[RMDB]
RNA sequence: GGGAACGACUCGAGUAGAGUCGAAAAGAAAGAAUUGGCCAAUUCCGGGACUGAACUCUCGUGGGUCUGCAGUGCUUUUCGUUGGAACUUGUAGCACCAUGAGAUUCAGCUCCGGUGCUGGUCUUAAUUAUAGGAAAAAAUUCGUUUUUUCCUAUAAAAAAGAAACAACAACAACAAC
Reactivity to 2A3 in 0.01 (KOAc 150mM, MgCl2 10mM, bicine 150mM(pH8.5), 24C), signal-to-noise 4, nucleotides 027 to 126: g090a020a120a010g080a050a130u200u110g000g000c000c000a000a020u080u030c000c000g010g000g010a010c000u000g000a000a010c080u000c000u000c010g010u000g010g000g040u010c010u000g000c000a020g080u020g080c060u100u110u110u230c140g160u190u260g060g020a050a020c010u050u100g010u000a000g000c040a020c010c000a000u010g000a010g000a010u000u000c000a000g000c010u000c000c000g000g000u000g000c010u020g000g000u000c000u010u010a010a000
Reactivity to DMS in 0.01 (KOAc 150mM, MgCl2 10mM, bicine 150mM(pH8.5), 24C), signal-to-noise 4, nucleotides 027 to 126: g000a130a110a100g000a130a110u010u010g000g010c000c000a020a110u010u000c010c000g000g010g000a050c000u000g000a010a010c160u000c000u000c000g040u000g000g000g000u010c000u000g010c010a010g010u000g000c100u010u010u030u020c190g010u030u020g010g010a060a030c020u020u020g020u010a010g000c080a010c010c000a000u000g000a010g010a060u000u000c000a000g000c020u000c000c010g000g000u000g010c060u000g000g010u000c000u000u020a020a120